[RMDB]
The record gives the reactivity of an RNA of 177 nucleotides to 2A3 and DMS. For 2A3 the reverse transcriptase was SuperScript II with manganese. 2A3 is a SHAPE reagent: it acylates the 2'-hydroxyl of flexible nucleotides of all four kinds. The reactions ran in a buffer of 150 mM KOAc, 10 mM MgCl2 and 150 mM bicine (pH 8.5), at 24 C. The 2A3 profile rests on 23,382 reads. For DMS, 16,149 sequencing reads were counted.
RNA sequence: GGGAACGACUCGAGUAGAGUCGAAAAAACAGCUGCUUCGGCAGCUGUUAACGCUCGCGGCUCGAGGCUGCACGAGCCGGACAGCAGCCAGUCCGCGACCUAUAGCCUUGGAGUUCGCUCCAAGGAAUCACUAACAUAAUUUCGAUUAUGUUAGUGAAAAAGAAACAACAACAACAAC
Reactivity to 2A3 in 0.01 (KOAc 150mM, MgCl2 10mM, bicine 150mM(pH8.5), 24C), signal-to-noise 4, nucleotides 027 to 126: a000a000c000a010g010c000u010g020c010u050u070c170g120g010c010a000g000c010u000g000u000u000a000a000c030g020c040u010c010g000c010g020g020c040u020c050g100a120g010g010c000u010g000c020a030c150g090a080g140c060c020g040g070a050c040a030g000c000a000g000c000c010a010g030u000c010c000g000c010g010a010c000c000u240a210u190a180g040c000c000u000u000g000g000a010g010u070u090c150g110c080u000c000c000a000a000g000g000a000a030
Reactivity to DMS in 0.01 (KOAc 150mM, MgCl2 10mM, bicine 150mM(pH8.5), 24C), signal-to-noise 9, nucleotides 027 to 126: a040a010c000a010g010c000u000g020c000u000u010c210g020g010c000a000g020c000u000g010u000u000a030a070c180g020c200u000c010g020c010g000g010c110u000c060g010a100g000g010c000u000g000c010a090c110g010a130g020c110c080g000g010a080c130a110g000c010a020g010c010c010a140g000u000c010c000g010c010g000a030c050c040u000a080u010a140g000c000c000u000u000g010g000a020g020u000u010c210g010c010u000c000c000a010a000g000g000a040a040